[RMDB]
RNA sequence: GGGAACGACUCGAGUAGAGUCGAAAACAGCGAGGUUUCGACCUCGUGGUGGUGUGCAUUGCCGACGAUCUGAGCGAUCGCAUCAUGGACUGACUGCAGAAACGCCGCGGUGUGUGACGACUCGAUCCUGUAGAGUCGAAUUCGUUCGACUCUACAGAAAAGAAACAACAACAACAAC
Reactivity to 2A3 in 0.01 (KOAc 150mM, MgCl2 10mM, bicine 150mM(pH8.5), 24C), signal-to-noise 7, nucleotides 027 to 126: c010a000g010c000g000a010g030g020u070u160u170c170g110a060c000c000u000c000g000u010g010g080u020g010g050u060g000u050g020c110a090u020u160g030c020c010g040a100c060g020a050u030c070u180g050a040g060c040g050a060u040c010g000c030a030u030c020a040u110g050g020a050c030u070g030a030c030u030g030c040a050g100a120a090a010c070g020c000c000g010c020g010g000u030g010u000g010u000g040a040c020g050a060c010u000c030g030a040u030c010
Reactivity to DMS in 0.01 (KOAc 150mM, MgCl2 10mM, bicine 150mM(pH8.5), 24C), signal-to-noise 5, nucleotides 027 to 126: c050a260g010c010g000a020g000g020u000u000u050c190g000a050c020c000u000c010g020u020g010g020u010g000g000u010g010u000g000c120a080u020u000g010c020c030g000a130c070g000a060u020c040u040g020a080g000c090g000a080u000c010g010c040a030u010c020a080u010g000g000a110c090u010g000a110c080u010g000c050a050g010a060a110a080c160g000c010c000g020c050g010g010u000g000u010g020u000g010a160c150g010a100c040u010c020g000a080u000c040
The record gives the reactivity of an RNA of 177 nucleotides to 2A3 and DMS.
2A3 adducts were read by reverse transcription with SuperScript II with manganese.
Conditions: 150 mM KOAc, 10 mM MgCl2 and 150 mM bicine (pH 8.5), 24 C.
Reactivities are given for positions 27 through 126.